[RMDB]
RNA sequence: GGGAACGACUCGAGUAGAGUCGAAAAUGGAAAAAGUCUCUUCAAGAUAGUGUUAAUCAAGAAAGCGUAAGGGAUAUUUUGAAUUGUUAUUUUUAUGCUACUUUGUUCGAUAAAUCGUGGUAUAAAAUACUAAUACGACGUUCGCGUCGUAUUAGUAAAAAGAAACAACAACAACAAC
Reactivity to DMS in 0.01 (KOAc 150mM, MgCl2 10mM, bicine 150mM(pH8.5), 24C), signal-to-noise 3, nucleotides 027 to 126: u000g010g010a070a020a050a050a170g010u010c010u000c010u000u000c050a080a210g010a070u000a040g030u000g010u010u020a080a080u020c060a110a150g010a100a110a090g010c190g010u010a040a030g000g000g000a050u000a020u000u000u010u000g000a120a100u000u000g000u010u000a090u010u000u000u000u000a010u000g000c010u000a020c010u000u000u000g010u000u010c210g020a150u000a060a090a020u000c130g010u010g000g010u000a030u000a010a010a020a070
Reactivity to 2A3 in 0.01 (KOAc 150mM, MgCl2 10mM, bicine 150mM(pH8.5), 24C), signal-to-noise 1, nucleotides 027 to 126: u080g020g040a000a090a000a000a000g060u000c020u080c000u040u030c040a070a050g060a080u130a080g080u080g020u260u080a120a090u120c090a170a040g080a200a180a030g000c080g050u130a010a020g010g000g000a000u020a290u090u090u020u030g010a060a050u100u000g040u000u050a080u060u070u000u000u000a000u010g000c000u020a020c000u100u000u030g050u110u230c090g040a090u080a130a150a010u080c030g010u030g000g070u030a020u000a010a030a000a000
Chemical mapping of a 177-nucleotide RNA with DMS and 2A3. For 2A3 the reverse transcriptase was SuperScript II with manganese. For DMS the reverse transcriptase was MarathonRT. It was measured as part of the RMDB library OK2TRN. For 2A3, 780 sequencing reads were counted.